[RMDB]
RNA sequence: GGGAACGACUCGAGUAGAGUCGAAAAUGCCCUUUGUACACACCGCCCGUCGCGUCUAUUGAUUAGGUAGCAUCAUGAGUGAGGCAGAGGAGAAAUAUUUUUAGAUUCGUCUAAUUUUAUUUUACUGGACUCUUUUGGUAUUCGUACCAAAAGAGUCAAAAGAAACAACAACAACAAC
Reactivity to 2A3 in 0.01 (KOAc 150mM, MgCl2 10mM, bicine 150mM(pH8.5), 24C), signal-to-noise 3, nucleotides 027 to 126: u100g040c000c000c000u030u060u070g040u050a040c040a000c010a010c020c010g040c010c010c010g030u030c060g010c010g040u000c030u030a070u060u210g140a120u100u100a010g000g050u040a040g020c020a030u060c000a020u130g050a020g110u060g010a060g050g000c020a010g030a020g050g020a070g110a040a030a000u060a020u020u050u000u010u030a010g000a010u000u030c110g010u000c130u000a000a020u050u020u010u010a020u010u040u010u060a100c090u080g030
Reactivity to DMS in 0.01 (KOAc 150mM, MgCl2 10mM, bicine 150mM(pH8.5), 24C), signal-to-noise 2, nucleotides 027 to 126: u040g000c020c010c000u010u010u040g000u010a070c090a040c070a050c090c030g040c050c010c070g030u020c080g030c080g000u020c070u000a060u030u010g010a130u000u020a030g020g000u010a050g000c020a070u030c070a060u030g020a060g000u030g010a110g030g000c020a070g000a030g000g010a180g010a030a060a020u010a000u000u020u000u000u000a020g000a020u010u010c110g000u000c000u000a010a010u000u000u000u000a020u000u000u010u020a130c120u020g010
Chemical mapping of a 177-nucleotide RNA with 2A3 and DMS. The 2A3 profile rests on 2,915 reads. The data come from the RNA Mapping Database (RMDB), libraries RFM100 and RFMREP. DMS (dimethyl sulfate) methylates the pairing face of unpaired adenines and cytosines. Conditions: 150 mM KOAc, 10 mM MgCl2 and 150 mM bicine (pH 8.5), 24 C. 2A3 adducts were read by reverse transcription with SuperScript II with manganese. As a SHAPE reagent, 2A3 marks flexible, mostly unpaired nucleotides at the ribose 2'-OH.